[RMDB]
RNA sequence: GGGAACGACUCGAGUAGAGUCGAAAAUCUGCCGUGAGUGGCACACGUAGGGCAAAUCGCUUGCUCUACGUGCGGAAUCGACAUCAAGAGAUUUCGGAAGCAUAAUUUUUGCACCGCAGGGCAGCUAGGGCCCUAUUUAAUUCGUUAAAUAGGGCCCAAAAGAAACAACAACAACAAC
Reactivity to 2A3 in 0.01 (KOAc 150mM, MgCl2 10mM, bicine 150mM(pH8.5), 24C), signal-to-noise 6, nucleotides 027 to 126: u030c010u020g020c010c010g170u060g050a090g010u190g080g000c010a010c010a000c000g010u010a010g010g000g000c020a000a020a070u260c170g050c280u040u010g000c000u000c000u010a000c000g000u010g010c000g000g010a000a000u000c010g080a060c050a080u150c070a140a030g060a010g000a090u000u010u000c000g010g020a060a000g030c050a090u100a220a230u180u070u060u060u060g010c010a020c000c020g020c060a060g000g040g010c010a000g000c020u130a090
Reactivity to DMS in 0.01 (KOAc 150mM, MgCl2 10mM, bicine 150mM(pH8.5), 24C), signal-to-noise 3, nucleotides 027 to 126: u020c010u000g010c000c000g010u010g020a140g030u010g010g010c000a030c000a010c030g010u000a010g000g000g000c000a020a000a190u010c300g000c260u000u000g020c000u000c000u000a000c000g020u010g030c010g000g010a010a020u000c010g000a130c170a150u050c280a130a090g010a300g020a020u000u000u010c000g000g000a050a070g020c150a050u070a060a080u000u000u000u000u000g040c000a050c050c020g010c020a010g020g000g020c000a000g000c300u000a110
Structure probing data (2A3 and DMS) for a 177-nucleotide construct. The RNA was probed in 150 mM KOAc, 10 mM MgCl2 and 150 mM bicine (pH 8.5) at 24 C. The data come from the RNA Mapping Database (RMDB), libraries RFM100 and RFMREP.